[RMDB]
Chemical mapping of a 177-nucleotide RNA with 2A3.
RNA sequence: GGGAACGACUCGAGUAGAGUCGAAAAGAUAUGGAAUCCACCUGGGACAUGCUGGAUAAGGGUCGGAAACGACCCGUAACAGCAACAGCCCAGUUGGAUUCCUAAGUCAAAGUGCCGUUCGCGGCACCGCGAUGUAGUAGUUCGCUACUACAUCGCGAAAAGAAACAACAACAACAAC
Reactivity to 2A3 in 0.01 (KOAc 150mM, MgCl2 10mM, bicine 150mM(pH8.5), 24C), signal-to-noise 1, nucleotides 027 to 126: g020a030u100a020u210g000g000a000a010u010c000c000a000c010c000u000g000g000g020a020c080a140u100g020c030u010g020g000a020u000a040a030g000g000g010u000c010g000g000a060a060a060c020g000a000c000c010c000g000u000a010a000c000a010g010c000a000a000c040a020g030c000c000c000a000g000u010u000g000g000a000u000u000c000c000u000a020a010g020u000c040a170a000a130g000u000g030c000c010g010u030u080c300g000c000g110g000c020a010c040

Reactivities are given for positions 27 through 126. Conditions: 150 mM KOAc, 10 mM MgCl2 and 150 mM bicine (pH 8.5), 24 C.